Structure probing data (DMS and 2A3) for a 207-nucleotide construct. The reactions ran in a buffer of 150 mM KOAc, 10 mM MgCl2 and 150 mM bicine (pH 8.5), at 24 C. For 2A3 the reverse transcriptase was SuperScript II with manganese. It was measured as part of the RMDB library M2RFPK. The DMS profile rests on 9,209 reads. The 2A3 profile rests on 4,135 reads.
[RMDB]
RNA sequence: GGGAACGACUCGAGUAGAGUCGAAAAUCCGACUCUCAUAGGCUCUCCAACCCAACUCCUACUCAAUACGUCCUCGUCGUACAGAACGGUAACGUGUUUUCCGAACAUCCGCGCUUGGGUAUACGAGAAAGGCGUAGAUUAUUCGUAAUCUACGCAAUUAAGUGUAGAACUUCGGUUCUACACUUAAAAAAGAAACAACAACAACAAC
Reactivity to DMS in 0.01 (KOAc 150mM, MgCl2 10mM, bicine 150mM(pH8.5), 24C), signal-to-noise 3, nucleotides 027 to 156: u000c070c020g010a070c030u000c020u000c010a160u000a160g030g000c020u000c010u000c010c020a100a150c020c020c020a090a110c020u000c020c010u000a040c020u010c030a060a100u010a060c020g020u000c010c010u000c040g050u000c070g020u000a150c060a100g010a070a080c020g010g010u000a050a090c070g010u000g010u000u000u000u000c050c070g010a100a070c040a120u000c020c010g020c020g010c050u000u000g020g030g000u000a070u010a040c050g010a150g020a090a070a080g020g020c000g040u000a000g000a020u000u000a040u010u020c270g030u000a020a010u000c000u000a000c000g020c010a010a000
Reactivity to 2A3 in 0.01 (KOAc 150mM, MgCl2 10mM, bicine 150mM(pH8.5), 24C), signal-to-noise 5, nucleotides 027 to 156: u050c020c030g040a050c010u020c000u020c040a090u070a140g050g000c000u010c020u000c030c030a070a050c000c000c010a020a040c030u060c030c020u070a080c030u030c060a030a070u050a090c020g040u020c010c020u030c010g040u020c010g010u050a050c030a090g070a120a030c010g020g030u080a090a030c060g040u040g040u050u040u060u010c030c040g030a060a030c020a070u080c020c020g070c010g010c070u040u040g030g000g050u090a060u020a100c030g010a020g080a120a040a030g140g000c000g000u000a000g000a000u000u020a020u020u050c160g040u030a000a000u000c000u010a000c000g000c000a010a000